[RMDB]
RNA sequence: GGGAACGACUCGAGUAGAGUCGAAAACCUUCUUCUCGUUUGCCUUUUUCUGCUUCUGCUGCAUGAUCUCCGAGUCCCUAGGGGUAGAGAUGAUGGGGCACUGGGAGGUACCAGAGGGCAAAAAGGAUCUUAGAGCCAAAUUCGUUUGGCUCUAAGAAAAAGAAACAACAACAACAAC
Reactivity to 2A3 in 0.01 (KOAc 150mM, MgCl2 10mM, bicine 150mM(pH8.5), 24C), signal-to-noise 7, nucleotides 027 to 126: c020c000u090u090c050u130u040c050u060c090g140u050u090u120g030c000c000u050u040u020u070u100c060u070g030c010u110u110c000u120g140c000u030g030c100a120u200g040a030u040c000u010c010c010g080a030g070u100c010c000c000u050a070g040g120g080g030u240a070g040a030g010a120u230g050a070u090g050g020g000g000c100a010c020u040g080g010g000a020g000g010u020a060c010c010a010g000a020g000g010g000c000a000a000a000a010a000g020g010a010
Reactivity to DMS in 0.01 (KOAc 150mM, MgCl2 10mM, bicine 150mM(pH8.5), 24C), signal-to-noise 2, nucleotides 027 to 126: c020c000u020u020c070u010u010c080u040c090g000u020u010u010g020c000c010u010u000u000u000u010c170u020g000c010u010u030c030u010g000c050u000g040c120a090u030g000a020u000c000u000c000c020g000a050g010u010c000c000c020u000a050g030g000g020g010u000a100g010a100g010a090u020g000a090u000g010g010g000g010c120a060c030u000g000g010g000a030g000g020u000a040c130c000a000g010a050g000g000g020c090a020a010a010a030a030g000g010a080